[RMDB]
RNA sequence: GGGAACGACUCGAGUAGAGUCGAAAAGAUAUGGACGUCAUACCAGGCAACAGCAUACGGUCGGAAACGACCGCUAUGACAUGCCUGAAUGACGUCCUAAGUCAAAAGUCGCAGUUCGCUGCGACAAUCUUAAUAUUGUCUUCGGACAAUAUUAAGAAAAAGAAACAACAACAACAAC
Reactivity to 2A3 in 0.01 (KOAc 150mM, MgCl2 10mM, bicine 150mM(pH8.5), 24C), signal-to-noise 6, nucleotides 027 to 126: g030a020u080a040u140g000g010a000c010g000u000c010a030u050a280c200c010a020g010g010c030a120a090c070a230g090c000a010u010a010c000g010g000u000c010g020g030a070a080a060c010g010a000c010c000g010c040u000a000u000g080a100c020a100u200g010c000c000u010g010a030a020u000g000a000c000g010u000c000c000u000a010a000g010u000c000a020a000a030a120g000u000c000g000c010a000g020u080u130c170g070c190u000g000c000g000a000c000a000a010
Reactivity to DMS in 0.01 (KOAc 150mM, MgCl2 10mM, bicine 150mM(pH8.5), 24C), signal-to-noise 8, nucleotides 027 to 126: g010a040u000a300u000g010g010a020c000g010u000c000a000u000a140c220c020a020g010g020c000a040a090c240a200g000c010a010u000a030c000g000g010u000c000g010g000a110a110a190c000g010a010c000c000g000c260u000a010u000g000a040c090a300u000g010c000c000u000g020a090a010u000g000a010c000g000u000c000c000u000a000a070g010u010c040a090a080a100a150g000u000c000g030c000a010g010u010u010c270g020c000u000g010c000g000a010c010a020a040